[RMDB]
RNA sequence: GGGAACGACUCGAGUAGAGUCGAAAAGGGGUCUUACUUGUCAGGACUGGAGGAAGCUUGGAUUUACCAGCUGAAGCCUCCACGGCUGGUUGUCAGCUUUGAAGGUCCUUGGAUUUAGUAAGACGGAGGCACCCAAAGGUCGUCUUCGGACGACCAAGAGGAAUUAUUUGUUCGCAAAUAAUUCCUCAAAAGAAACAACAACAACAAC
Reactivity to DMS in 0.01 (KOAc 150mM, MgCl2 10mM, bicine 150mM(pH8.5), 24C), signal-to-noise 2, nucleotides 027 to 156: g000g020g000g020u000c000u000u000a000c010u000u000g000u010c010a080g030g020a030c020u000g010g000a300g000g020a080a030g000c030u000u030g060g010a170u000u010u000a080c000c010a020g010c020u060g000a080a150g030c040c010u000c000c000a220c060g010g030c000u010g030g000u000u000g010u000c050a060g010c010u060u000u000g010a300a300g010g000u010c000c020u000u010g030g010a050u000u010u000a030g030u000a020a050g010a060c020g040g020a040g070g000c030a140c000c010c010a090a120a190g000g000u000c000g010u000c010u000u000c300g040g010a010c000g010a010c000c010a000a100
Reactivity to 2A3 in 0.01 (KOAc 150mM, MgCl2 10mM, bicine 150mM(pH8.5), 24C), signal-to-noise 5, nucleotides 027 to 156: g080g000g010g010u020c000u000u000a000c010u030u050g030u020c020a030g020g000a010c010u060g030g070a080g170g190a090a030g000c040u180u250g140g010a100u220u160u250a050c000c000a010g000c010u030g020a060a020g050c010c020u000c010c010a010c000g000g010c000u000g010g010u020u040g030u030c040a030g010c000u160u080u110g040a040a020g040g000u010c090c000u010u090g030g000a000u210u070u060a000g000u000a000a000g000a000c000g010g010a000g010g030c040a050c020c000c000a090a070a000g010g000u000c000g000u000c020u040u080c240g090g000a000c000g000a000c000c000a000a010